Chemical mapping of a 207-nucleotide RNA with 2A3. Values cover nucleotides 27 to 156. The data come from the RNA Mapping Database (RMDB), library RSTRND. For 2A3, 834 sequencing reads were counted.
RNA sequence: GGGAACGACUCGAGUAGAGUCGAAAACUUAAGCCCAACUGAGGCUUGCUCGCUUUUAGUCCGACUCCGUUAACGGCUAAAACGAAACCCCAACGGAUGCACCUUUUAGUUACUUUCGGUUGACUAAUUGCGUAAAGACUUCACCGAAACAUCCUACGCAUGUGUUGUUCUUCGGAACAACACAUGCAAAAGAAACAACAACAACAAC
Reactivity to 2A3 in 0.01 (KOAc 150mM, MgCl2 10mM, bicine 150mM(pH8.5), 24C), signal-to-noise 1, nucleotides 027 to 156: c010u050u110a000a010g010c000c000c050a080a090c300u300g130a200g060g000c020u000u020g050c080u080c120g110c070u100u010u000u000a000g030u000c010c020g000a000c050u000c000c000g020u050u050a010a010c000g000g000c000u000a000a000a080a000c030g050a100a040a040c030c040c050c000a000a000c000g010g000a000u030g050c010a030c000c010u000u000u010u000a010g000u010u030a000c020u020u000u040c000g000g000u000u020g000a000c000u000a030a000u000u020g080c110g050u020a010a010a010g060a000c060u200u090c280a000c000c000g000a020a010a010c070a100u110c000c020u020a050c060